This 177-nucleotide RNA was probed chemically with DMS. The reactions ran in a buffer of 150 mM KOAc, 10 mM MgCl2 and 150 mM bicine (pH 8.5), at 24 C. It was measured as part of the RMDB library OK2TST.

[RMDB]
RNA sequence: GGGAACGACUCGAGUAGAGUCGAAAAAUGCUUAAGAAUGAACAUUGUGAACCGAGUGCUGAUGAUAUUGUAGGUUUGGAACAGUAUAUGAAGUGCCCCUUUUCAUACCUACUGGACACCUGGUGUGAUGUGCCUGACUUUUCGAAGUCAGGCACAUAAAAGAAACAACAACAACAAC
Reactivity to DMS in 0.01 (KOAc 150mM, MgCl2 10mM, bicine 150mM(pH8.5), 24C), signal-to-noise 1, nucleotides 027 to 126: a040u000g030c030u010u010a040a090g030a170a070u000g020a100a050c110a050u000u000g000u010g010a130a080c070c040g020a110g010u000g000c010u000g030a140u000g010a070u000a090u020u000g010u010a010g000g000u000u000u000g020g000a020a030c190a030g000u000a030u000a100u000g000a120a090g000u000g000c020c030c030c070u000u000u010u000c000a000u000a010c080c080u000a040c010u000g010g000a060c050a030c020c010u020g000g000u010g010u000g000